[RMDB]
Chemical mapping of a 177-nucleotide RNA with DMS and 2A3.
It was measured as part of the RMDB library OK2TST.
Values cover nucleotides 27 to 126.
RNA sequence: GGGAACGACUCGAGUAGAGUCGAAAAGCGUAGCCAGAAGCAUUUGACCAGGAGGAGACACACUCGCGCUUAUAGCUCCCUAUCACUACGCCCAUGCUGACACAUGGCAUGCUAUACAGUGCGAUGGCUCGUGUAGACGCUUCGGCGUCUACACGAGAAAAGAAACAACAACAACAAC
Reactivity to DMS in 0.01 (KOAc 150mM, MgCl2 10mM, bicine 150mM(pH8.5), 24C), signal-to-noise 2, nucleotides 027 to 126: g010c010g050u000a000g030c090c030a100g000a160a140g020c050a100u000u000u000g020a070c070c060a080g000g000a050g010g000a110g000a080c040a110c060a130c110u010c020g020c010g030c000u000u000a070u000a020g020c000u000c030c010c020u010a150u020c130a150c000u000a050c070g000c090c030c000a050u010g000c020u000g000a160c160a270c020a000u000g010g000c180a140u010g000c020u000a030u000a030c220a020g020u000g000c020g000a080u010g010g020
Reactivity to 2A3 in 0.01 (KOAc 150mM, MgCl2 10mM, bicine 150mM(pH8.5), 24C), signal-to-noise 1, nucleotides 027 to 126: g000c020g000u030a020g070c040c000a030g030a100a070g040c050a110u110u020u150g120a080c020c020a030g000g030a060g040g070a040g060a030c130a000c000a010c170u010c020g000c020g000c000u010u030a040u010a020g000c000u020c000c020c000u080a100u210c100a040c090u080a040c070g060c000c010c020a020u060g000c060u110g080a020c000a000c010a090u000g000g000c030a070u090g000c000u000a010u020a040c080a090g050u010g020c030g000a010u000g090g010
The reactions ran in a buffer of 150 mM KOAc, 10 mM MgCl2 and 150 mM bicine (pH 8.5), at 24 C. For 2A3 the reverse transcriptase was SuperScript II with manganese. For DMS, 914 sequencing reads were counted.